[RMDB]
Structure probing data (2A3 and DMS) for a 177-nucleotide construct. For 2A3, 233,962 sequencing reads were counted. DMS (dimethyl sulfate) methylates the pairing face of unpaired adenines and cytosines.

RNA sequence: GGGAACGACUCGAGUAGAGUCGAAAAGUGACGAGGGCCAGACUGUCCGUGAGAACGGACAAGGAGGUACUUAUCGGCGUGCGCCGUCAACUUCGGGUAUAAAUGAGUUGCCCUAGGUACGCCGUGACUAGUGCUAUGUAUUCGUACAUGGUACUAGAAAAGAAACAACAACAACAAC
Reactivity to 2A3 in 0.01 (KOAc 150mM, MgCl2 10mM, bicine 150mM(pH8.5), 24C), signal-to-noise 9, nucleotides 027 to 126: g090u050g020a030c050g020a100g010g050g000c010c000a040g070a160c020u010g000u000c000c000g000u010g020a080g020a040a010c000g000g000a000c000a000a020g030g010a020g020g010u100a200c030u110u150a120u100c010g000g000c010g000u020g000c050g030c020c030g030u030c010a040a040c010u120u100c060g080g040g080u250a180u090a260a190a110u270g060a050g080u060u040g030c000c000c010u020a030g010g020u010a000c000g000c000c000g000u010g010a010
Reactivity to DMS in 0.01 (KOAc 150mM, MgCl2 10mM, bicine 150mM(pH8.5), 24C), signal-to-noise 9, nucleotides 027 to 126: g020u000g010a060c070g010a110g010g010g010c010c020a050g010a300c060u000g000u000c000c000g010u000g000a260g000a230a010c010g000g000a010c000a020a030g000g000a170g010g010u000a060c080u010u000a090u000c010g010g010c010g020u000g000c030g010c080c070g000u000c010a030a050c020u000u000c090g010g010g010u020a250u010a060a080a100u010g000a060g010u000u000g010c020c010c020u000a040g010g010u000a020c010g010c000c000g010u000g000a160